This 207-nucleotide RNA was probed chemically with 2A3. It was measured as part of the RMDB library M2RFPK. The reactions ran in a buffer of 150 mM KOAc, 10 mM MgCl2 and 150 mM bicine (pH 8.5), at 24 C. For 2A3 the reverse transcriptase was SuperScript II with manganese. The 2A3 profile rests on 676 reads.
RNA sequence: GGGAACGACUCGAGUAGAGUCGAAAAGAAAUUACGUUUCCUUUACACUUCUCAAACCGGGAUCAAGAGAAGCAAAGCAUCCCUCUUAUCCACGAUGGAGGGUGUCGUGGAGUAUACUGUACCAAAAAGAGCGAACACGGCUUCGGCCGUGUUCGAAGCAUUUUUACGAGUUCGCUCGUAAAAAUGCAAAAGAAACAACAACAACAAC
Reactivity to 2A3 in 0.01 (KOAc 150mM, MgCl2 10mM, bicine 150mM(pH8.5), 24C), signal-to-noise 1, nucleotides 027 to 156: g000a000a100a000u150u040a040c010g030u060u060u030c030c000u020u090u060a030c000a030c030u190u180c030u050c020a130a130a130c030c020g010g010g010a040u040c090a050a090g010a000g050a040a010g000c060a110a060a080g040c010a040u090c000c060c020u030c010u010u030a010u070c030c000a040c080g010a030u030g150g010a020g010g060g000u050g000u040c000g020u010g010g010a010g020u000a010u020a080c120u120g030u100a090c000c070a000a100a050a010a000g080a020g080c000g000a000a000c010a000c000g000g010c020u020u040c180g030g030c000c000g000u010g010u010u000c030g000a020a000